Structure probing data (2A3 and DMS) for a 207-nucleotide construct. For 2A3 the reverse transcriptase was SuperScript II with manganese. For DMS the reverse transcriptase was MarathonRT. The data come from the RNA Mapping Database (RMDB), library M2RFPK. The RNA was probed in 150 mM KOAc, 10 mM MgCl2 and 150 mM bicine (pH 8.5) at 24 C.

[RMDB]
RNA sequence: GGGAACGACUCGAGUAGAGUCGAAAAGAGAGGGUAACCACCGGCGCGCGUCACUGAUAUAUCCACCGGGGGGUAAGGGGAGAAAAGGAUAAAGCGCGACGAAGUUAGCACGCUGCCCCGUAAGGCUUGAAGAGUGUAGUGUUCGCACUACACUCAAUCUAGUAUGAGUGUUCGCACUCAUACUAGAAAAAGAAACAACAACAACAAC
Reactivity to 2A3 in 0.01 (KOAc 150mM, MgCl2 10mM, bicine 150mM(pH8.5), 24C), signal-to-noise 2, nucleotides 027 to 156: g080a020g020a030g000g000g010u110a070a060c040c020a010c060c010g030g020c020g010c000g000c000g080u070c060a040c110u060g030a040u100a020u020a020u280c020c010a040c090c060g030g000g010g040g000g080u060a020a050g070g010g010g000a080g040a010a130a070a000g040g020a020u170a080a060a000g000c030g020c000g010a000c010g000a050a000g080u110u080a010g090c050a000c060g040c010u030g010c000c020c000c000g000u070a020a030g060g010c050u080u150g090a110a070g000a030g000u000g000u020a000g010u000g070u050u020c170g000c040a000c000u010a000c000a010c000u020c000a000a000
Reactivity to DMS in 0.01 (KOAc 150mM, MgCl2 10mM, bicine 150mM(pH8.5), 24C), signal-to-noise 1, nucleotides 027 to 156: g000a140g010a110g030g000g000u000a070a040c050c010a130c060c010g030g060c010g000c010g030c080g000u010c080a190c030u000g030a160u000a130u010a140u000c020c040a100c060c040g010g010g080g020g030g020u000a030a080g020g010g000g020a070g000a130a070a140a080g020g030a080u010a010a070a060g000c000g030c000g020a080c010g000a060a150g010u010u010a120g000c010a060c030g000c010u020g020c030c010c020c090g010u000a010a080g030g000c050u010u000g010a110a220g010a030g060u000g010u010a000g040u000g040u010u000c300g080c010a030c000u000a000c000a000c000u000c010a010a050